[RMDB]
RNA sequence: GGGAACGACUCGAGUAGAGUCGAAAAACGGCGGAUGCUCGUGGGCUGAUUCAGUCCUCUAGGGCACACGCCAUUGUGGCUCUGACUCGUCACACGGAGAAGUGUGUGGUAGUUGACGCCCCAGGGCCACCUAGAUGUGCUUCGGCACAUCUAGGUGAAAAGAAACAACAACAACAAC
Reactivity to 2A3 in 0.01 (KOAc 150mM, MgCl2 10mM, bicine 150mM(pH8.5), 24C), signal-to-noise 3, nucleotides 027 to 126: a000c030g000g000c010g010g000a060u020g000c010u010c010g040u050g000g020g000c000u030g040a300u300u280c070a010g000u000c000c000u000c110u220a200g010g000g000c030a020c020a010c000g000c000c010a000u020u090g060u020g010g000c000u000c000u020g130a060c000u000c020g070u030c000a010c010a010c020g210g120a290g050a300a140g080u040g000u010g000u020g220g040u050a030g000u030u060g040a040c100g070c010c000c010c010a020g040g030g000c040
Reactivity to DMS in 0.01 (KOAc 150mM, MgCl2 10mM, bicine 150mM(pH8.5), 24C), signal-to-noise 4, nucleotides 027 to 126: a050c170g010g010c000g000g000a220u000g000c000u000c010g000u000g010g020g000c010u000g010a290u000u040c050a010g010u000c010c000u000c070u010a210g010g000g010c000a010c300a110c010g010c000c000a060u000u010g000u000g030g000c000u010c010u000g000a050c010u000c010g010u010c010a000c010a020c000g000g010a180g010a170a110g000u000g010u000g010u020g000g000u000a020g010u000u010g000a130c260g000c050c010c000c040a040g000g000g010c140